Chemical mapping of a 207-nucleotide RNA with DMS and 2A3. As a SHAPE reagent, 2A3 marks flexible, mostly unpaired nucleotides at the ribose 2'-OH. Conditions: 150 mM KOAc, 10 mM MgCl2 and 150 mM bicine (pH 8.5), 24 C. Reactivities are given for positions 27 through 156. For DMS the reverse transcriptase was MarathonRT.
[RMDB]
RNA sequence: GGGAACGACUCGAGUAGAGUCGAAAAGUAUGAGCCACCAUGCCCGGCCAUGAUAGCUUUUUAAUAAGAGAUAUGAGACCCCAGAGGAGAAACCAACAAAUACAGUUGUCCCUUAUUAUCUGUUGGAGAUUGGUUCCAGGAUUCCUCCUCAGAUACCGUACUCUAGACAUUUCGAUGUCUAGAGUACAAAAGAAACAACAACAACAAC
Reactivity to DMS in 0.01 (KOAc 150mM, MgCl2 10mM, bicine 150mM(pH8.5), 24C), signal-to-noise 1, nucleotides 027 to 156: g010u000a030u020g050a070g010c000c010a010c060c010a020u010g030c030c010c150g030g020c020c000a020u000g010a050u010a050g000c030u030u030u000u010u000a100a160u010a080a100g000a120g000a110u000a070u000g020a240g020a120c030c000c010c050a120g000a030g000g040a100g030a070a100a050c010c020a050a090c040a060a090a140u000a090c100a100g000u000u000g030u000c000c010c010u000u010a040u000u010a100u010c020u000g020u000u000g010g030a160g000a190u000u010g000g000u010u000c040c020a160g000g000a270u000u000c090c010u000c000c010u010c000a080g030a120u000a050c260c100
Reactivity to 2A3 in 0.01 (KOAc 150mM, MgCl2 10mM, bicine 150mM(pH8.5), 24C), signal-to-noise 2, nucleotides 027 to 156: g090u080a090u110g030a020g030c010c010a020c000c000a120u090g060c030c010c060g050g000c050c020a050u070g030a080u070a020g020c030u060u080u120u090u080a230a160u220a170a020g040a020g030a040u030a030u210g090a110g020a040c000c000c040c030a030g020a020g050g020a030g010a060a030a030c020c010a000a040c040a050a110a020u120a120c050a010g020u060u030g050u160c040c000c020u040u080a110u080u050a060u050c010u010g080u080u020g070g000a010g010a060u030u100g050g000u140u040c040c030a030g030g030a010u100u030c000c000u000c000c000u010c000a010g010a070u070a070c010c000

Source: RMDB library OK3TST, as collected in RNAgym.
High DMS reactivity at an A or C suggests that its Watson-Crick edge is free.